[RMDB]
RNA sequence: GGGAACGACUCGAGUAGAGUCGAAAACUGAGGGUGAAUAUAGCUAUAGCUGUAUAUCUAUAAGAUAUGAGUGUCUUAUAGAUAUAUGCUUGUAUCUGUAAGAUUCUGUAUCUUUCAAUCUAUCCUGCGAUUUAAUGUGGUUCGCCACAUUAAAUCGAAAAGAAACAACAACAACAAC
Reactivity to 2A3 in 0.01 (KOAc 150mM, MgCl2 10mM, bicine 150mM(pH8.5), 24C), signal-to-noise 2, nucleotides 027 to 126: c010u020g020a030g030g060g010u040g050a200a000u150a040u080a090g020c020u040a040u090a130g000c040u070g010u040a000u020a020u040c000u050a040u030a070a000g010a010u040a070u270g130a110g180u170g000u040c000u000u000a000u000a000g000a010u000a000u000a000u020g000c000u010u080g000u010a030u020c010u010g010u020a020a010g000a020u160u060c090u300g080u090a040u040c010u060u010u070c000a060a120u040c000u030a040u070c010c010u000g040
Reactivity to DMS in 0.01 (KOAc 150mM, MgCl2 10mM, bicine 150mM(pH8.5), 24C), signal-to-noise 2, nucleotides 027 to 126: c050u020g010a040g000g000g020u010g000a070a090u000a050u010a070g000c060u000a020u010a030g010c010u010g020u000a010u000a000u000c000u000a020u000a000a030g000a020u000a060u000g000a170g020u010g000u000c000u000u000a020u000a000g000a010u000a020u000a020u000g000c050u010u010g020u000a010u000c030u000g000u000a040a040g010a060u000u010c160u020g010u010a030u000c020u010u010u000c090a070a110u010c060u010a080u010c010c010u000g000
Chemical mapping of a 177-nucleotide RNA with 2A3 and DMS. The RNA was probed in 150 mM KOAc, 10 mM MgCl2 and 150 mM bicine (pH 8.5) at 24 C. The DMS profile rests on 2,004 reads. For 2A3, 1,406 sequencing reads were counted. Reactivities are given for positions 27 through 126. DMS adducts were read by reverse transcription with MarathonRT. It was measured as part of the RMDB library OK2TRN.